[RMDB]
Source information:
Source: RMDB library RSTRND, as collected in RNAgym. The record gives the reactivity of an RNA of 207 nucleotides to 2A3 and DMS. The RNA was probed in 150 mM KOAc, 10 mM MgCl2 and 150 mM bicine (pH 8.5) at 24 C. For DMS, 2,173 sequencing reads were counted. Values cover nucleotides 27 to 156.

RNA sequence: GGGAACGACUCGAGUAGAGUCGAAAAGCACUUCGAGUUCACAGGUCAAACGAUAGCGGCCACUUCGGUGGUUGAGAUAUGAUCGGCCUCCAGCGCCACCUAGCUGGGGAAUUUUGCGGAACCUGCGGAAGGAUCAUUAAUGAGUUCGGGGGCCUAGCUUAUAAGACGUCUUCGGACGUCUUAUAAGAAAAGAAACAACAACAACAAC
Reactivity to 2A3 in 0.01 (KOAc 150mM, MgCl2 10mM, bicine 150mM(pH8.5), 24C), signal-to-noise 3, nucleotides 027 to 156: g020c030a010c130u070u040c030g020a020g030u040u070c040a040c040a080g040g050u050c050a120a110a050c080g040a040u060a050g060c060g010g000c000c020a010c000u080u110c250g070g000u010g010g030u010u010g030a040g020a060u170a080u130g090a060u050c040g030g000c000c000u060c010c020a010g000c010g030c060c010a090c040c020u080a040g020c000u000g000g000g000g070a010a030u160u230u090u140g060c050g030g050a010a040c010c010u070g000c080g030g020a090a010g070g020a020u040c010a000u050u190a160a060u090g010a010g030u050u070c020g010g010g000g030g020c000c040u020a010g010
Reactivity to DMS in 0.01 (KOAc 150mM, MgCl2 10mM, bicine 150mM(pH8.5), 24C), signal-to-noise 1, nucleotides 027 to 156: g020c030a090c040u010u010c000g000a130g000u000u010c080a010c010a050g050g010u000c010a070a060a090c030g020a060u000a060g000c050g000g020c000c000a000c010u010u000c290g050g020u020g000g020u000u000g020a070g010a090u010a040u000g000a050u010c030g000g010c090c000u020c010c000a060g000c000g010c010c060a110c100c040u020a150g000c040u030g040g030g000g000a010a060u000u000u000u010g000c070g010g000a060a050c040c040u000g000c030g010g020a130a060g000g000a060u000c040a120u000u000a080a130u010g020a070g010u000u000c090g010g000g000g080g050c030c010u000a130g000
Overview:
For 2A3 the reverse transcriptase was SuperScript II with manganese.